[RMDB]
RNA sequence: GGGAACGACUCGAGUAGAGUCGAAAAGAUAUGGAUCUAUCAUGAGCGACGAAGAACUCUUUCGGAAACGAAAGAGGGAGUCGAACAUGAGUAGAUCCUAAGUCAAACUCUAAGUUCGCUUAGAGAAGUACAGGUUACUGUUCGCAGUAACCUGUACAAAAGAAACAACAACAACAAC
Reactivity to 2A3 in 0.01 (KOAc 150mM, MgCl2 10mM, bicine 150mM(pH8.5), 24C), signal-to-noise 1, nucleotides 027 to 126: g020a000u100a060u250g000g010a010u000c010u000a010u020c010a000u000g000a000g060c000g030a010c030g140a300a110g000a090a040c010u000c000u000u000u020c010g010g000a040a080a080c020g010a000a000a000g000a000g000g000g000a010g030u010c010g010a040a020c000a000u010g000a040g100u060a000g010a010u000c000c010u000a110a010g050u000c030a040a060a160c010u020c000u010a010a010g010u000u200c300g120c230u010u020a000g000a010g000a050a020
Reactivity to DMS in 0.01 (KOAc 150mM, MgCl2 10mM, bicine 150mM(pH8.5), 24C), signal-to-noise 1, nucleotides 027 to 126: g010a080u010a300u010g010g010a000u000c000u010a000u000c000a000u000g000a100g050c010g000a010c000g020a140a120g010a090a230c010u000c000u000u000u030c000g000g020a160a100a190c000g000a000a000a000g000a010g000g000g000a040g000u000c000g020a010a060c000a000u000g010a020g010u000a000g010a010u000c010c000u010a040a090g010u010c050a150a130a160c000u000c000u000a000a010g000u010u010c300g020c020u000u000a020g030a010g020a080a150